This 177-nucleotide RNA was probed chemically with 2A3 and DMS.
For DMS the reverse transcriptase was MarathonRT.
For 2A3 the reverse transcriptase was SuperScript II with manganese.
Reactivities are given for positions 27 through 126.
The DMS profile rests on 1,759 reads.
The RNA was probed in 150 mM KOAc, 10 mM MgCl2 and 150 mM bicine (pH 8.5) at 24 C.
[RMDB]
RNA sequence: GGGAACGACUCGAGUAGAGUCGAAAAUUUGACAGUUAUGUCAAAGGGACACACCCUUCGCGCGUCCUGGGGCGUGCCAGUCGAUGACGAGGAAAAUCGUAUCGAUUGAAAUCUGCGUCCCGGGGCCUGAUCAUGCCUGUUUCGACAGGCAUGAUCAAAAAGAAACAACAACAACAAC
Reactivity to 2A3 in 0.01 (KOAc 150mM, MgCl2 10mM, bicine 150mM(pH8.5), 24C), signal-to-noise 3, nucleotides 027 to 126: u040u030u010g000a010c020a020g100u270u250a170u200g020u030c000a000a000a000g040g070g040a030c020a010c010a080c070c010c000u130u180c070g020c010g010c080g020u040c000c000u000g000g000g000g020c000g000u000g010c040c000a000g000u000c000g000a000u020g130a050c000g020a030g080g120a100a130a010a100u000c000g000u000a010u000c010g010a000u010u010g000a070a050a010u080c060u140g010c000g000u010c000c010c000g000g000g000g000c000c010
Reactivity to DMS in 0.01 (KOAc 150mM, MgCl2 10mM, bicine 150mM(pH8.5), 24C), signal-to-noise 1, nucleotides 027 to 126: u000u000u000g000a000c000a030g000u070u010a040u040g020u000c000a010a000a020g000g000g000a110c300a100c300a190c000c000c000u000u010c090g030c190g000c190g000u000c000c000u000g000g000g000g000c000g000u000g010c290c010a000g000u000c000g000a010u000g050a030c000g000a040g000g000a150a110a030a240u000c000g050u000a010u000c000g020a020u000u000g000a070a110a120u020c210u080g000c020g000u000c000c010c000g020g020g000g000c000c070